[RMDB]
RNA sequence: GGGAACGACUCGAGUAGAGUCGAAAAAGAGUAGGCAUACGUGCCUACUCAAGAUGAUGAGCGCCAUCGAUGCUGAGGAGUGAUGACCGGAUUCCUGGCUGAACGCGAUGGCUACGGCCAUCGCGAACACGUUGAAGCCGUUCGCGGCUUCAACGUGAAAAGAAACAACAACAACAAC
Reactivity to 2A3 in 0.01 (KOAc 150mM, MgCl2 10mM, bicine 150mM(pH8.5), 24C), signal-to-noise 2, nucleotides 027 to 126: a000g040a000g000u000a010g000g000c030a000u020a040c300g140u010g000c000c000u000a000c000u000c000a000a010g030a010u250g000a020u000g060a020g000c040g040c010c010a020u060c010g000a000u150g010c030u210g100a030g040g060a030g000u090g130a110u090g020a120c020c020g060g000a010u010u060c000c000u010g040g000c160u050g030a100a020c070g000c000g000a000u000g000g000c010u020a060c250g060g000c000c000a000u000c000g010c000g000a010a000